[RMDB]
RNA sequence: GGGAACGACUCGAGUAGAGUCGAAAAAACUUUUUUGCAUUGUAGACCAUGUCAUCCAAUUCUUCCUCAGUGGCUGUGUCUGCAGGAUUAGUGCUCACAUGACCAAAUCUCACCUUUGGUUCCAGAAAAUAUAUCGUGUCUUCGGACACGAUAUAUUAAAAGAAACAACAACAACAAC
Reactivity to 2A3 in 0.01 (KOAc 150mM, MgCl2 10mM, bicine 150mM(pH8.5), 24C), signal-to-noise 1, nucleotides 027 to 126: a000a000c210u200u060u010u010u050u100g040c030a040u080u000g020u030a000g010a020c030c000a040u130g010u010c000a030u080c090c020a070a130u110u100c070u060u080c000c050u070c040a020g020u010g030g010c000u020g020u080g000u140c000u020g030c010a000g000g030a050u110u090a030g030u020g050c040u020c010a060c030a100u170g030a010c010c000a000a050a050u030c090u030c030a070c020c040u010u040u030g030g030u070u000c030c000a040g100a080a240
Reactivity to DMS in 0.01 (KOAc 150mM, MgCl2 10mM, bicine 150mM(pH8.5), 24C), signal-to-noise 4, nucleotides 027 to 126: a070a040c050u010u000u000u010u000u010g020c070a100u000u000g010u000a060g000a070c020c030a040u020g000u000c020a040u000c070c100a070a100u000u000c100u010u000c020c010u010c070a120g020u000g000g020c010u000g010u010g020u010c020u000g000c030a030g000g000a040u000u000a050g020u000g010c050u000c040a060c110a100u000g010a070c030c020a020a050a050u000c060u000c080a070c100c110u000u000u000g010g000u000u010c060c040a110g010a100a060